[RMDB]
RNA sequence: GGGAACGACUCGAGUAGAGUCGAAAACACAGUGCGGCAUCAAUUCUGCCGUAAGCUCGCAGAAUCCCGUCCUCGUCUAGGUAAGGCACCAACCCUCGAAUGUCGCUCGAUCUAGUAACGUCCUGUCCGUCCGCCACGGAUUCGUCCGUGGCGGACGAAAAGAAACAACAACAACAAC
Reactivity to 2A3 in 0.01 (KOAc 150mM, MgCl2 10mM, bicine 150mM(pH8.5), 24C), signal-to-noise 1, nucleotides 027 to 126: c130a000c000a020g010u100g100c000g000g000c080a000u020c100a100a210u060u200c170u070g070c010c010g010u020a070a000g020c000u000c090g000c000a000g120a150a000u060c000c000c030g020u030c000c000u040c020g060u060c080u030a020g080g000u050a000a170g100g000c030a100c000c000a000a090c000c000c000u000c030g140a030a050u030g020u070c000g040c000u000c010g000a090u120c010u040a040g050u280a130a000c080g000u010c000c000u000g080u050c040
Structure probing data (2A3) for a 177-nucleotide construct.
2A3 adducts were read by reverse transcription with SuperScript II with manganese.
Source: RMDB library OK1LIB, as collected in RNAgym.
Conditions: 150 mM KOAc, 10 mM MgCl2 and 150 mM bicine (pH 8.5), 24 C.